Source information:
Source: RMDB library M2RFPK, as collected in RNAgym. Structure probing data (DMS and 2A3) for a 207-nucleotide construct. The 2A3 profile rests on 961 reads. For DMS, 2,510 sequencing reads were counted. Conditions: 150 mM KOAc, 10 mM MgCl2 and 150 mM bicine (pH 8.5), 24 C. DMS adducts were read by reverse transcription with MarathonRT. Values cover nucleotides 27 to 156.
RNA sequence: GGGAACGACUCGAGUAGAGUCGAAAAGAAUCACCGUACCUAUUUAGGUUUCCGCUCCAAGAUCGGUGGAUAGCAGCCCUAUCAAUAUCUAGGAGAACUGUGCUAUGUUUAGAAGAUUAGGUAGUCUAUUACACAGCCAUGUUCGCAUGGCUGUGAACUUAGGCUUUGGAUUCGUCCAAAGCCUAAGAAAAGAAACAACAACAACAAC
Reactivity to DMS in 0.01 (KOAc 150mM, MgCl2 10mM, bicine 150mM(pH8.5), 24C), signal-to-noise 2, nucleotides 027 to 156: g000a110a100u000c010a210c010c030g030u000a110c010c000u000a210u010u000u000a050g010g000u000u000u020c030c030g010c000u000c040c040a120a110g040a030u010c080g020g060u010g000g030a080u000a070g000c040a200g030c160c080c040u000a130u000c040a060a090u000a100u000c060u000a080g000g010a040g000a070a090c030u000g010u000g010c050u000a100u010g000u010u030u000a110g010a150a110g010a140u000u000a040g000g030u010a100g040u000c040u020a110u000u000a270c010a020c010a050g050c000c000a010u010g030u000u000c270g000c040a000u010g000g000c020u010g000u000g010a020a030
Reactivity to 2A3 in 0.01 (KOAc 150mM, MgCl2 10mM, bicine 150mM(pH8.5), 24C), signal-to-noise 1, nucleotides 027 to 156: g020a010a010u040c000a010c010c010g050u030a040c010c020u040a100u220u280u230a080g000g020u020u070u040c000c000g030c000u010c030c040a080a040g020a100u070c010g050g020u020g020g020a020u000a010g070c060a000g000c000c000c020u000a040u040c030a100a040u050a020u300c020u050a020g000g030a010g060a100a050c070u050g010u000g150c010u030a040u170g080u040u110u030a070g030a140a070g010a080u130u090a010g050g040u010a010g070u000c030u030a160u090u040a050c010a000c000a000g000c010c000a000u020g010u020u060c190g000c110a000u010g020g000c000u000g000u000g000a000a000